[RMDB]
RNA sequence: GGGAACGACUCGAGUAGAGUCGAAAACUCGUCUGGUUCGCCAGACGAGAAAGAAAAUCCGAGCGAAGCGAAGGGCACAAACGCUCGGAGUGCCCAAACCCAAAACGUGGGGGUUCGCCCCCACGAACCUAAGUGUUACCUUCGGGUAACACUUAGGAAAAGAAACAACAACAACAAC
Reactivity to DMS in 0.01 (KOAc 150mM, MgCl2 10mM, bicine 150mM(pH8.5), 24C), signal-to-noise 2, nucleotides 027 to 126: c010u000c000g010u000c000u020g010g010u000u010c290g060c010c010a000g000a000c000g000a030g010a010a040a080g000a060a090a120a080u000c000c010g000a030g030c020g000a150a140g000c120g000a050a100g030g010g010c030a050c040a120a100a140c000g030c010u000c010g000g000a000g020u010g000c020c020c020a050a090a110c100c050c070a100a030a060a120c040g040u010g000g000g000g010g000u000u030c280g010c000c000c010c020c000a000c000g000a010a050
Reactivity to 2A3 in 0.01 (KOAc 150mM, MgCl2 10mM, bicine 150mM(pH8.5), 24C), signal-to-noise 2, nucleotides 027 to 126: c000u000c000g010u000c000u000g020g040u060u070c180g030c070c000a000g000a000c000g010a000g010a000a030a000g000a000a060a000a050u020c000c000g000a010g000c010g080a130a010g030c030g150a220a070g200g110g020c040a010c060a100a190a000c030g000c000u010c000g020g010a000g010u000g030c020c000c000a010a070a080c070c030c010a060a090a020a050c010g000u010g010g000g000g000g030u040u020c170g070c010c000c030c000c000a000c000g010a000a010
This 177-nucleotide RNA was probed chemically with DMS and 2A3. The 2A3 profile rests on 2,496 reads. The reactions ran in a buffer of 150 mM KOAc, 10 mM MgCl2 and 150 mM bicine (pH 8.5), at 24 C. The data come from the RNA Mapping Database (RMDB), library M2PK50.